RNA sequence: GGGAACGACUCGAGUAGAGUCGAAAAGAUAUGGAAUGUGUUCCGAAGCCCUCACGAAUUCGGAAACGAACUAUGAGGGAACUACUUUGACACAUUCCUAAGUCAAAGGACAUGUUCGCAUGUCCAAGAGUAAAACCAAGUUCGCUUGGUUUUACUCAAAAGAAACAACAACAACAAC
Reactivity to 2A3 in 0.01 (KOAc 150mM, MgCl2 10mM, bicine 150mM(pH8.5), 24C), signal-to-noise 4, nucleotides 027 to 126: g020a020u040a020u110g000g010a010a010u000g000u010g030u190u080c110c010g010a020a010g010c010c020c000u000c010a060c080g290a170a300u110u030c010g010g000a030a040a040c020g000a010a010c070u080a120u270g000a000g000g000g050a000a000c030u210a020c000u070u000u030g010a000c000a000c000a010u000u010c000c000u010a070a020g020u010c030a090a050a120g010g000a000c000a000u020g030u040u130c300g000c180a010u030g000u000c000c000a010a020
Reactivity to DMS in 0.01 (KOAc 150mM, MgCl2 10mM, bicine 150mM(pH8.5), 24C), signal-to-noise 4, nucleotides 027 to 126: g000a060u000a300u010g000g000a020a010u000g000u000g010u000u010c200c080g010a020a020g000c000c000c000u000c000a040c160g000a040a240u000u000c010g010g010a100a070a090c010g010a000a030c100u000a140u000g000a020g010g000g010a060a010c030u010a270c040u010u000u000g000a040c000a010c010a010u000u010c000c010u000a000a050g000u010c030a110a120a100g010g000a010c000a000u000g000u000u000c190g020c000a010u000g000u000c000c020a020a040